This 177-nucleotide RNA was probed chemically with DMS. The reactions ran in a buffer of 150 mM KOAc, 10 mM MgCl2 and 150 mM bicine (pH 8.5), at 24 C. Source: RMDB library TTRDEL, as collected in RNAgym. Reactivities are given for positions 27 through 126.
[RMDB]
RNA sequence: GGGAACGACUCGAGUAGAGUCGAAAAGAUAUGGAAGACUGACAUGCUGAACUGUCGGAAACGACAGAGCAGCAACAGCAGGUCUUCCUAAGUCAAAGAGCGAGUGAACUUCGGUUCACUCGCUCAACAACGCAGUAGAGUUCGCUCUACUGCGUUGAAAAGAAACAACAACAACAAC
Reactivity to DMS in 0.01 (KOAc 150mM, MgCl2 10mM, bicine 150mM(pH8.5), 24C), signal-to-noise 2, nucleotides 027 to 126: g040a050u010a300u000g020g000a020a020g000a030c000u000g010a230c240a170u000g000c000u030g000a050a020c010u000g000u010c030g010g020a090a040a220c020g000a020c000a000g010a060g010c000a020g000c000a010a060c260a180g000c070a150g000g000u000c000u010u000c000c000u000a020a060g000u000c030a060a080a130g000a000g010c030g020a000g000u000g020a040a020c000u000u020c240g010g000u000u000c000a000c000u000c000g060c000u000c000a000a090